[RMDB]
RNA sequence: GGGAACGACUCGAGUAGAGUCGAAAAAAGUGAUUAUUCGUAAUCACUUCACGCCGCGCGCGGUGGCGCGUGCCUGUAGUCCCAGCUACUCGGGAGGCUAAACGACGUACCCGUUCGCGGGUACGAACAUGUCUGCAAAUUUCGAUUUGCAGACAUGAAAAGAAACAACAACAACAAC
Reactivity to 2A3 in 0.01 (KOAc 150mM, MgCl2 10mM, bicine 150mM(pH8.5), 24C), signal-to-noise 4, nucleotides 027 to 126: a000a000g010u010g000a010u010u030a010u030u100c170g040u070a030a010u000c000a000c000u040u070c050a080c060g020c010c000g010c000g010c000g010c020g170g180u080g170g000c000g030c000g020u020g030c020c020u060g040u070a020g030u020c010c020c010a010g050c020u060a050c020u030c070g020g020g020a060g030g020c050u080a070a110a010c060g100a010c010g010u010a000c030c020c000g010u010u040c230g000c010g020g010g000u000a000c000g000a000a000
Reactivity to DMS in 0.01 (KOAc 150mM, MgCl2 10mM, bicine 150mM(pH8.5), 24C), signal-to-noise 5, nucleotides 027 to 126: a020a000g010u000g000a010u000u000a020u000u010c170g030u000a010a010u000c000a010c000u000u010c070a110c130g000c120c030g010c050g010c030g020c040g010g030u010g010g020c010g010c020g010u000g010c040c030u000g000u000a080g010u000c010c000c010a150g000c030u000a040c040u010c090g000g010g000a120g010g000c040u000a040a080a100c160g010a200c020g010u000a010c000c000c000g020u000u000c160g010c020g000g000g000u000a000c000g000a030a130
Source information
Source: RMDB library M2PK50, as collected in RNAgym. Chemical mapping of a 177-nucleotide RNA with 2A3 and DMS. The 2A3 profile rests on 6,577 reads. For DMS, 7,288 sequencing reads were counted. The RNA was probed in 150 mM KOAc, 10 mM MgCl2 and 150 mM bicine (pH 8.5) at 24 C. As a SHAPE reagent, 2A3 marks flexible, mostly unpaired nucleotides at the ribose 2'-OH. 2A3 adducts were read by reverse transcription with SuperScript II with manganese.